[RMDB]
RNA sequence: GGGAACGACUCGAGUAGAGUCGAAAAAUCAAAGUUUUUAUUCUACCUAGUAAAGCAUACACAACAACAGAUUUCUGUGCAUUGGUUCAAGGUAACCUAAUAUCUGACCACCAUUGGUUCACAAUUCGGUACAUCAACAAUUCGUUGUUGAUGUACCAAAAGAAACAACAACAACAAC
Reactivity to DMS in 0.01 (KOAc 150mM, MgCl2 10mM, bicine 150mM(pH8.5), 24C), signal-to-noise 3, nucleotides 027 to 126: a040u010c090a120a140a190g000u010u020u000u000u000a070u010u010c030u030a120c030c040u000a060g020u000a060a050a080g030c040a080u020a100c100a030c050a060a090c060a070a050c110a130g000a110u000u000u010c050u020g030u010g010c070a040u000u000g010g010u000u010c110a090a000g010g010u000a030a060c150c080u000a030a070u000a020u000c020u000g000a080c120c120a090c060c060a090u000u000g010g000u000u000c030a060c080a080a090u000u010c090
Reactivity to 2A3 in 0.01 (KOAc 150mM, MgCl2 10mM, bicine 150mM(pH8.5), 24C), signal-to-noise 1, nucleotides 027 to 126: a000u090c060a070a060a050g020u040u040u020u050u070a140u100u030c030u060a080c010c000u030a040g060u130a080a060a000g030c020a020u040a060c050a000c000a060a130c010a060a000c000a060g030a080u030u230u010c020u050g040u030g000c020a020u020u130g000g000u040u060c020a070a010g030g000u030a040a040c010c000u070a100a080u030a030u050c020u040g000a050c030c010a010c020c030a060u030u070g060g020u110u040c010a000c030a060a020u140u110c050
This 177-nucleotide RNA was probed chemically with DMS and 2A3. It was measured as part of the RMDB library OK2TRN. The reactions ran in a buffer of 150 mM KOAc, 10 mM MgCl2 and 150 mM bicine (pH 8.5), at 24 C.